[RMDB]
RNA sequence: GGGAACGACUCGAGUAGAGUCGAAAAUUGCUGCUUUACCCACUAUUACAGAUAGCAGGUUGGGAGACAGUUUGAGUCCUGUGUUUGCACUCCAGGCCUACUAGGGAAGAGGUGGCCUGCCUCCAGCAGUAAACUGGUAACUAUCUAAGACCUAUGAAUUAUACCAGGAGUUCGCUCCUGGUAUAAUAAAAGAAACAACAACAACAAC
Reactivity to DMS in 0.01 (KOAc 150mM, MgCl2 10mM, bicine 150mM(pH8.5), 24C), signal-to-noise 2, nucleotides 027 to 156: u000u000g030c010u020g020c000u000u010u000a170c020c000c000a100c040u010a120u000u000a180c160a170g020a130u000a030g050c030a040g070g040u000u010g020g020g000a040g000a070c040a050g020u000u000u010g000a160g000u000c040c040u010g010u000g000u000u000u020g030c060a140c030u000c040c010a030g020g030c020c020u010a070c030u000a060g000g020g000a120a080g000a100g010g000u000g020g000c080c030u000g010c040c020u030c010c040a120g000c010a120g000u000a050a050a070c010u000g000g020u000a050a110c060u010a060u000c030u000a080a130g020a080c030c010u010a060u000g000a090
Reactivity to 2A3 in 0.01 (KOAc 150mM, MgCl2 10mM, bicine 150mM(pH8.5), 24C), signal-to-noise 6, nucleotides 027 to 156: u070u030g020c010u000g020c010u100u060u180a160c010c040c020a030c050u140a110u170u140a060c050a070g130a100u100a030g030c040a020g060g040u050u050g060g020g000a030g010a020c020a050g030u060u100u090g060a030g030u050c010c020u040g010u020g020u080u100u120g040c050a030c020u030c020c010a010g000g010c000c020u050a060c010u040a080g080g010g010a040a040g010a040g020g030u010g010g010c000c010u010g010c010c010u020c010c010a020g000c010a010g020u110a040a140a050c010u020g030g000u040a060a040c030u060a060u130c030u050a040a060g060a050c060c000u080a080u210g190a090

The record gives the reactivity of an RNA of 207 nucleotides to DMS and 2A3. For 2A3, 4,854 sequencing reads were counted. For DMS, 3,453 sequencing reads were counted. For DMS the reverse transcriptase was MarathonRT. 2A3 adducts were read by reverse transcription with SuperScript II with manganese. It was measured as part of the RMDB library OK3TST.